[RMDB]
RNA sequence: GGGAACGACUCGAGUAGAGUCGAAAAGUGCAGUGGGUGGCAGACGACUGCGACAGUCUUUACCCAUUUUGGACUAUUGUUGCUCUCAUGAUAGUUUGGAUGGCUGCUCUCCUGUUUCAACCGGUCCAGGUCCGAUUUUAUUCGUAAAAUCGGACCUAAAAGAAACAACAACAACAAC
Reactivity to DMS in 0.01 (KOAc 150mM, MgCl2 10mM, bicine 150mM(pH8.5), 24C), signal-to-noise 1, nucleotides 027 to 126: g060u000g040c030a000g050u020g000g020g060u010g000g000c070a030g020a090c080g000a100c050u010g020c130g000a050c090a080g000u000c010u000u040u020a050c150c030c000a100u030u000u090u000g030g000a020c000u010a060u010u020g000u000u020g010c070u020c100u010c050a030u010g000a130u040a020g000u000u010u050g020g020a040u000g000g010c020u000g040c000u010c060u000c030c040u030g000u000u050u020c040a040a090c060c020g000g000u010c100c130
Reactivity to 2A3 in 0.01 (KOAc 150mM, MgCl2 10mM, bicine 150mM(pH8.5), 24C), signal-to-noise 3, nucleotides 027 to 126: g060u050g020c020a000g030u210g050g030g030u150g080g000c030a010g020a050c020g000a020c050u090g010c040g120a020c040a000g000u010c000u080u160u190a150c000c000c010a020u060u020u060u130g040g000a000c010u010a030u070u090g060u050u070g030c020u000c010u030c080a040u070g060a040u040a040g020u010u030u050g090g020a070u000g040g000c020u020g040c000u000c020u020c000c000u040g000u010u090u040c030a040a040c040c000g040g040u070c050c020
An RNA of 177 nucleotides, treated with DMS and 2A3 and read out base by base. For DMS the reverse transcriptase was MarathonRT. For DMS, 2,092 sequencing reads were counted.